[RMDB]
RNA sequence: GGGAACGACUCGAGUAGAGUCGAAAACGAACUCAUCCUUCACCACGUCGAGCAGGCGGCGAUGCAGGCGCUCGACAAGCUGGAGAGCCUCCAGAUAAAGGCUGCGAAGCGCGGUUUGCGGUGCCAACAUUAGUCGCGGAUUCGUCCGCGACUAAUGAAAAGAAACAACAACAACAAC
Reactivity to DMS in 0.01 (KOAc 150mM, MgCl2 10mM, bicine 150mM(pH8.5), 24C), signal-to-noise 1, nucleotides 027 to 126: c120g010a110a060c050u000c090a060u010c030c000u000u000c050a140c030c070a080c110g040u000c010g000a080g090c030a080g030g020c010g000g050c030g000a140u000g020c020a110g000g000c060g070c000u000c020g020a070c080a050a050g010c090u000g000g010a120g020a070g000c060c010u000c020c040a130g000a100u000a020a170a060g000g000c040u000g010c090g000a140a040g010c030g040c070g010g020u000u000u000g030c040g000g020u000g020c020c050a090a200
Reactivity to 2A3 in 0.01 (KOAc 150mM, MgCl2 10mM, bicine 150mM(pH8.5), 24C), signal-to-noise 1, nucleotides 027 to 126: c010g060a080a010c020u020c050a060u080c040c010u000u040c070a020c110c010a030c050g010u010c030g010a030g000c010a040g060g210c030g080g000c050g130a070u230g030c000a000g150g000c020g000c050u020c020g070a080c020a030a010g000c020u090g010g010a130g000a010g160c000c030u000c040c010a030g030a070u130a080a210a030g090g000c000u050g050c070g050a080a040g050c050g010c020g070g100u060u070u120g000c000g000g020u020g000c010c010a090a090